[RMDB]
RNA sequence: GGGAACGACUCGAGUAGAGUCGAAAAGGGGUUAGCGUAUGCAAAACGCUGUUAUUGCAAUGAUCUGGAUUUAGCGCAAGUAGGUCCGAAAUCCAGAUCAACAUUUCGGACCUCCGCGCUAAUAAAAGUUACGUGUAAUCUUCGGAUUACACGUAACAAAAGAAACAACAACAACAAC
Reactivity to DMS in 0.01 (KOAc 150mM, MgCl2 10mM, bicine 150mM(pH8.5), 24C), signal-to-noise 6, nucleotides 027 to 126: g010g000g000g000u010u000a030g020c030g020u010a060u010g030c210a050a050a070a060c020g010c020u000g010u010u000a070u000u000g010c050a090a090u010g010a140u010c030u000g000g010a200u000u000u000a010g020c020g020c010a090a110g020u000a020g000g000u000c010c000g010a000a010a010u000c120c120a120g000a080u010c150a040a050c190a060u000u000u000c000g000g000a030c010c000u010c080c140g010c010g010c010u000a000a010u000a040a060a090a110
Reactivity to 2A3 in 0.01 (KOAc 150mM, MgCl2 10mM, bicine 150mM(pH8.5), 24C), signal-to-noise 2, nucleotides 027 to 126: g040g000g010g010u080u110a010g000c000g020u050a040u230g100c070a050a030a000a020c050g020c080u040g070u130u110a150u060u100g060c050a060a110u100g030a100u070c050u080g090g000a060u000u040u020a010g000c010g000c000a050a110g040u090a000g100g010u000c000c010g010a000a010a000u060c070c030a050g020a090u060c000a000a020c000a010u000u010u000c010g000g000a000c000c000u000c000c030g010c000g000c000u010a010a000u020a020a070a010a010